[RMDB]
RNA sequence: GGGAACGACUCGAGUAGAGUCGAAAAAAGAUAUGGAGAGUGUGAAGUUAAGCACCUGGGAGUGGUAGAAUCGGAAACGAUUCUCCCACGAAGAACAGGUGAAAACACCACACUCUCCUAAGUCAAACAUAGUAGGAGGGUUCGCCCUCCUACUAUGAAAAGAAACAACAACAACAAC
Reactivity to DMS in 0.01 (KOAc 150mM, MgCl2 10mM, bicine 150mM(pH8.5), 24C), signal-to-noise 3, nucleotides 027 to 126: a100a090g000a020u010a050u000g010g010a020g020a040g010u000g020u000g000a170a230g010u010u010a020a050g010c000a010c000c010u000g000g030g010a020g020u000g000g000u010a020g000a010a000u010c000g010g000a000a000a020c000g000a010u000u000c010u000c060c000c010a010c020g000a080a180g010a100a190c010a000g000g010u000g000a000a000a030a200c110a020c020c000a010c000a010c000u010c000u000c000c000u000a000a030g010u000c000a140a110a250
Reactivity to 2A3 in 0.01 (KOAc 150mM, MgCl2 10mM, bicine 150mM(pH8.5), 24C), signal-to-noise 1, nucleotides 027 to 126: a000a000g010a020u010a020u050g010g020a010g000a010g010u010g000u000g070a250a300g000u130u260a070a010g020c000a000c000c010u020g010g000g030a000g010u000g000g020u010a000g010a000a000u010c010g030g010a010a000a010c000g000a010u010u000c000u000c010c000c000a010c000g060a150a000g000a000a000c000a000g010g000u010g000a020a010a010a010c040a010c010c000a000c000a010c010u020c000u000c000c000u000a000a000g000u000c000a020a020a030
An RNA of 177 nucleotides, treated with DMS and 2A3 and read out base by base.
For 2A3, 4,354 sequencing reads were counted.
The DMS profile rests on 3,878 reads.
The RNA was probed in 150 mM KOAc, 10 mM MgCl2 and 150 mM bicine (pH 8.5) at 24 C.